[RMDB]
Annotation:
Source: RMDB library OK3TST, as collected in RNAgym. Structure probing data (2A3) for a 207-nucleotide construct.
RNA sequence: GGGAACGACUCGAGUAGAGUCGAAAAAGGCACAGAGACAGAAUAACAGUAGCUACACUUUGGGGGCUCUUACUGUGUGCUAGGCACUGGGUUAAGCACCAGACAGGAGUGAUCUUGUUGGGUCUUUACCCCACUAGGAGGUGUAGGUGCUGUGGGAUCAGUUUUAAAUCUUCGGAUUUAAAACUGAAAAAGAAACAACAACAACAAC
Reactivity to 2A3 in 0.01 (KOAc 150mM, MgCl2 10mM, bicine 150mM(pH8.5), 24C), signal-to-noise 2, nucleotides 027 to 156: a010g120g030c060a040c000a030g060a020g060a060c040a070g150a200a140u160a130a030c000a000g010u020a000g130c000u000a000c020a000c000u090u270u260g040g000g000g020g000c010u030c000u080u000a020c000u020g020u040g000u040g300c030u020a030g180g000c020a070c240u180g150g010g000u060u060a080a000g000c040a000c000c000a020g060a200c040a000g000g020a010g020u040g040a020u040c020u060u160g050u130u090g040g000g000u010c000u000u080u070a010c000c030c030c010a020c030u110a030g120g040a020g030g000u000g000u000a000g020g020u000g000c000u010g010u000g000g020g010a020